RNA sequence: GGGAACGACUCGAGUAGAGUCGAAAAGCUCCGGGAAAUUCCUUCAGCCAUUUCCGUAUUUCGUGCUCUUCCAUUGCGAAACGACAACCCUCGUGCCAAGUAGAAAAAUACGCAAACUAAAAAGUCCGCAGUACGUAUGCUUCGGCAUACGUACUGCAAAAGAAACAACAACAACAAC
Reactivity to 2A3 in 0.01 (KOAc 150mM, MgCl2 10mM, bicine 150mM(pH8.5), 24C), signal-to-noise 2, nucleotides 027 to 126: g050c060u060c050c000g020g010g090a100a130a000u100u100c000c000u000u060c020a030g010c000c000a060u020u080u050c010c020g000u070a050u040u050u020c040g000u050g070c010u060c010u120u000c040c040a040u000u160g020c040g020a030a000a010c070g100a030c050a070a050c000c000c010u040c030g000u040g000c000c000a050a000g040u060a070g180a030a090a000a000a040u130a050c050g000c110a090a060a030c070u190a010a130a180a020a020g070u070c040c060
An RNA of 177 nucleotides, treated with 2A3 and read out base by base. The 2A3 profile rests on 671 reads. It was measured as part of the RMDB library OK1LIB.